[RMDB]
RNA sequence: GGGAACGACUCGAGUAGAGUCGAAAAUAUUAGACACGGUUCCGGACAAUGGCGGCCGGUUGGAGCUGACGGAAUCCGACGCCAAUGCUUGGAUCGCCGCCGUCAACGACCUUCGGCUGGCGCUCGGAUGACUACGGAAUUUCGAUUCCGUAGUCAUAAAAGAAACAACAACAACAAC
Reactivity to DMS in 0.01 (KOAc 150mM, MgCl2 10mM, bicine 150mM(pH8.5), 24C), signal-to-noise 4, nucleotides 027 to 126: u020a090u010u010a130g000a120c070a060c100g020g000u000u000c010c020g010g000a070c110a080a110u010g000g010c010g020g010c070c060g030g010u010u000g010g010a230g020c050u000g010a050c020g010g010a240a060u010c180c030g000a020c040g010c020c040a030a110u000g000c150u000u000g020g010a050u000c080g010c040c050g010c020c030g010u000c050a030a070c060g000a100c060c040u000u000c040g020g010c030u000g010g000c020g000c070u000c030g010g010
Reactivity to 2A3 in 0.01 (KOAc 150mM, MgCl2 10mM, bicine 150mM(pH8.5), 24C), signal-to-noise 2, nucleotides 027 to 126: u090a040u120u140a030g050a030c050a030c170g070g030u050u050c010c010g000g030a050c060a080a170u150g070g040c050g020g050c040c030g040g030u000u040g020g010a030g000c020u000g050a020c020g050g010a020a050u050c030c030g040a000c070g040c000c020a050a070u200g030c050u060u080g050g010a040u100c040g010c050c020g010c030c000g020u020c010a070a010c030g120a110c000c000u050u060c020g030g000c020u050g050g030c040g000c050u030c030g060g000